RNA sequence: GGGAACGACUCGAGUAGAGUCGAAAAUUGCCGAAGCCGGCGUUAUUGCUGCCCAGGUUUGCCAGCCCAAGGUUCAGAGUCAUCGUGCCCAUACCGUCGCGCAUGAGACCGGAGGCAAAGGCCGGCGCGCGUACAGUCUAUUCGUAGACUGUACGCGAAAAGAAACAACAACAACAAC
Reactivity to DMS in 0.01 (KOAc 150mM, MgCl2 10mM, bicine 150mM(pH8.5), 24C), signal-to-noise 3, nucleotides 027 to 126: u060u040g000c010c030g010a150a130g000c010c000g010g000c000g020u020u000a050u030u020g000c050u010g020c060c000c070a130g000g000u010u000u000g000c050c010a120g000c010c010c040a110a210g000g030u000u000c110a120g050a040g010u010c050a100u000c110g020u000g020c020c030c040a140u010a060c140c060g000u020c120g020c170g000c070a070u000g020a090g000a050c010c040g000g000a300g000g000c070a040a030a170g000g000c000c000g000g050c060g040
Reactivity to 2A3 in 0.01 (KOAc 150mM, MgCl2 10mM, bicine 150mM(pH8.5), 24C), signal-to-noise 4, nucleotides 027 to 126: u080u140g100c010c000g080a090a020g000c020c000g000g020c020g010u050u070a230u100u070g000c010u040g040c030c000c030a040g040g040u050u050u090g030c000c010a030g010c010c050c010a070a120g050g000u070u060c050a030g040a040g170u010c030a110u040c070g050u080g020c000c040c030a050u090a140c050c040g060u150c020g000c010g000c040a040u080g000a010g050a060c000c020g000g040a040g040g000c000a050a010a010g070g000c000c000g000g020c000g000